[RMDB]
Conditions: 150 mM KOAc, 10 mM MgCl2 and 150 mM bicine (pH 8.5), 24 C. Chemical mapping of a 177-nucleotide RNA with 2A3 and DMS. For 2A3, 2,236 sequencing reads were counted. For DMS the reverse transcriptase was MarathonRT. The data come from the RNA Mapping Database (RMDB), library TTRDES.
RNA sequence: GGGAACGACUCGAGUAGAGUCGAAAAGAUAUGGAUACUCCUUGUGACCGAUGAAAUCAAUCGGAAACGAUUGAUGGAGGUCAGAAGGAGGUAUCCUAAGUCAAAGUCUUUGCUUCGGCAAAGACAACGAUUCACGAUUGUUCGCAAUCGUGAAUCGAAAAGAAACAACAACAACAAC
Reactivity to 2A3 in 0.01 (KOAc 150mM, MgCl2 10mM, bicine 150mM(pH8.5), 24C), signal-to-noise 1, nucleotides 027 to 126: g050a000u120a020u150g010g000a010u010a010c000u080c000c000u090u060g300u030g130a010c010c000g300a300u070g030a000a040a000u000c010a010a020u000c010g020g000a080a020a030c040g000a010u020u000g000a020u010g000g020a000g000g040u050c010a010g030a000a000g000g000a050g020g000u000a000u010c000c000u000a140a000g070u000c040a060a130a090g020u030c010u040u000u000g000c010u030u110c300g090g000c020a000a010a000g000a000c000a010a000
Reactivity to DMS in 0.01 (KOAc 150mM, MgCl2 10mM, bicine 150mM(pH8.5), 24C), signal-to-noise 1, nucleotides 027 to 126: g010a020u010a300u010g000g010a000u010a060c000u000c000c000u010u000g000u000g000a010c000c000g000a180u020g040a090a050a010u000c010a010a000u010c000g000g000a070a090a160c010g020a020u000u000g010a020u010g000g000a010g000g010u000c010a010g000a010a000g030g000a020g000g000u010a000u000c000c000u000a020a160g010u010c050a220a110a110g010u010c000u000u000u000g000c000u000u000c300g050g000c000a030a000a000g000a010c010a010a060